This 177-nucleotide RNA was probed chemically with DMS and 2A3. Conditions: 150 mM KOAc, 10 mM MgCl2 and 150 mM bicine (pH 8.5), 24 C. The 2A3 profile rests on 627 reads.

RNA sequence: GGGAACGACUCGAGUAGAGUCGAAAAGAACGAGUGGACUUCUGCCAAACGAGACCCGUCUAUGAUGGGAAGAAAUGGAGGAUGGUGCGCCACAUUACCAGCGUCGCUAAGGACUGCUGCACCGUCAUCCCUCUGUGUCCUUCGGGACACAGAGGGAAAAAGAAACAACAACAACAAC
Reactivity to DMS in 0.01 (KOAc 150mM, MgCl2 10mM, bicine 150mM(pH8.5), 24C), signal-to-noise 2, nucleotides 027 to 126: g040a070a080c150g050a120g060u000g010g000a150c120u000u060c000u000g010c010c080a010a090a140c130g000a170g020a200c000c000c000g000u000c040u000a140u030g000a030u000g000g040g040a070a150g020a040a000a120u010g080g000a090g000g000a040u000g000g030u000g000c010g040c090c070a130c140a050u000u000a060c020c110a050g000c040g000u000c000g040c270u020a100a010g040g000a030c080u030g000c020u070g010c040a010c010c000g050u000c060a060
Reactivity to 2A3 in 0.01 (KOAc 150mM, MgCl2 10mM, bicine 150mM(pH8.5), 24C), signal-to-noise 1, nucleotides 027 to 126: g020a000a010c060g000a000g100u140g000g040a020c000u060u020c060u060g020c040c000a020a020a020c090g050a060g020a040c000c000c000g050u000c020u060a110u300g020a000u000g000g020g050a060a000g070a040a210a020u060g000g000a000g140g000a000u090g000g100u050g000c000g010c000c020a000c000a090u040u020a060c120c000a000g000c000g040u000c010g000c020u060a050a010g120g000a010c030u090g000c000u020g000c000a010c020c010g020u000c000a070
Description:
Reactivities are given for positions 27 through 126.